[RMDB]
RNA sequence: GGGAACGACUCGAGUAGAGUCGAAAAUGUUGUGUUUGCAUAUUGUUUGGGAAACCAAACAGAGUAACUUAUCUUAAGUUACUUAUUUUCACUUCCUGUAUAUUUAUUUUAGACCCUUUUGGUUAAACUUUAUCAGAAACUUCGGUUUCUGAUAAAGAAAAGAAACAACAACAACAAC
Reactivity to DMS in 0.01 (KOAc 150mM, MgCl2 10mM, bicine 150mM(pH8.5), 24C), signal-to-noise 1, nucleotides 027 to 126: u010g030u000u000g010u000g030u000u000u050g000c110a120u010a080u030u030g050u020u000u040g010g010g000a120a160a140c010c010a000a010a000c070a070g000a080g010u030a000a030c040u000u000a060u030c300u090u020a000a000g000u000u000a010c000u000u000a040u020u020u040u000c070a070c070u000u020c020c000u000g020u000a070u000a050u000u030u010a040u030u010u030u010a130g000a060c020c010c180u000u010u090u020g000g000u000u020a010a070a140
Reactivity to 2A3 in 0.01 (KOAc 150mM, MgCl2 10mM, bicine 150mM(pH8.5), 24C), signal-to-noise 5, nucleotides 027 to 126: u110g020u040u020g050u010g030u070u080u180g090c100a080u150a080u130u130g010u020u000u000g000g000g010a040a060a050c000c000a000a000a000c000a000g000a000g000u010a000a000c000u020u060a060u300c070u170u220a010a000g000u010u000a000c000u040u040a090u080u070u050u090c030a020c000u010u000c000c020u030g080u030a080u010a040u090u160u010a150u080u130u070u070a110g060a140c010c010c010u070u100u150u300g040g000u020u070a000a000a050
The record gives the reactivity of an RNA of 177 nucleotides to DMS and 2A3. High DMS reactivity at an A or C suggests that its Watson-Crick edge is free. For 2A3, 2,084 sequencing reads were counted. The RNA was probed in 150 mM KOAc, 10 mM MgCl2 and 150 mM bicine (pH 8.5) at 24 C.